[RMDB]
RNA sequence: GGGAACGACUCGAGUAGAGUCGAAAAUCUAUCACCAGCCCAUGUUUACGACACGAAUGGGCUGUUGCAAAUUACGUAUAGCUCAUGCAACAUCGUGUCGAAACGUUCCCAAGCUAUACGCCACAAACAUGAAGUUUUGAUUCGUCAAAACUUCAUGAAAAGAAACAACAACAACAAC
Reactivity to 2A3 in 0.01 (KOAc 150mM, MgCl2 10mM, bicine 150mM(pH8.5), 24C), signal-to-noise 7, nucleotides 027 to 126: u000c000u020a140u100c040a030c080c010a000g010c010c000c000a020u060g080u060u160u080a090c020g010a000c000a000c020g030a060a050u050g020g030g000c020u010g000u010u010g000c030a020a060a150u240u140a060c030g000u010a010u000a010g000c010u030c150a090u190g050c050a060a040c010a110u040c000g020u010g010u010c020g020a090a060a010c020g000u000u000c000c000c000a000a010g000c000u000a010u000a030c010g020c030c020a110c020a020a110a010
Reactivity to DMS in 0.01 (KOAc 150mM, MgCl2 10mM, bicine 150mM(pH8.5), 24C), signal-to-noise 7, nucleotides 027 to 126: u000c050u000a100u000c100a130c060c020a050g000c000c010c010a190u000g000u010u010u010a140c040g010a020c010a010c010g010a060a090u010g000g010g010c050u000g010u000u010g000c120a070a090a090u010u010a090c040g000u000a010u000a010g000c000u010c190a100u010g000c110a040a050c070a070u000c010g010u000g010u000c020g010a040a070a220c050g000u000u000c000c000c000a150a040g000c000u000a010u000a010c020g020c170c160a090c140a060a050a140